[RMDB]
RNA sequence: GGGAACGACUCGAGUAGAGUCGAAAAAAACGCACGCAAAAGCCCUUUAUGGCAAUGUGUCUCGGCUGGUUAUGGUACACCAAUCUGACGUAUGGUUAUCAGUAAUAUUCCCGCACGUCAUUUAGAGACCAUGGACAGACUUCGGUCUGUCCAUGGUAAAAGAAACAACAACAACAAC
Reactivity to 2A3 in 0.01 (KOAc 150mM, MgCl2 10mM, bicine 150mM(pH8.5), 24C), signal-to-noise 2, nucleotides 027 to 126: a000a000a010c000g000c040a000c010g040c000a030a020a070a100g000c000c000c000u000u140u120a150u080g030g000c000a000a080u040g030u010g020u000c050u120c050g080g000c060u080g030g050u090u100a110u100g050g010u010a020c000a000c110c000a010a060u000c040u020g000a000c010g020u040a060u030g040g000u020u040a030u100c030a040g090u070a010a130u040a090u050u000c000c000c010g000c000a030c000g000u000c000a010u070u010u220a170g030a000g020
Reactivity to DMS in 0.01 (KOAc 150mM, MgCl2 10mM, bicine 150mM(pH8.5), 24C), signal-to-noise 2, nucleotides 027 to 126: a030a020a020c050g000c300a050c080g000c020a100a040a170a050g010c010c000c120u010u020u000a100u020g040g000c040a070a200u070g000u000g000u000c090u000c050g000g030c030u010g020g000u000u000a070u020g000g000u000a020c130a030c010c000a020a070u000c050u020g010a010c020g000u000a120u010g010g000u000u040a040u000c060a010g020u010a070a030u000a060u000u000c000c010c010g020c300a000c030g010u010c000a020u030u000u030a090g000a170g000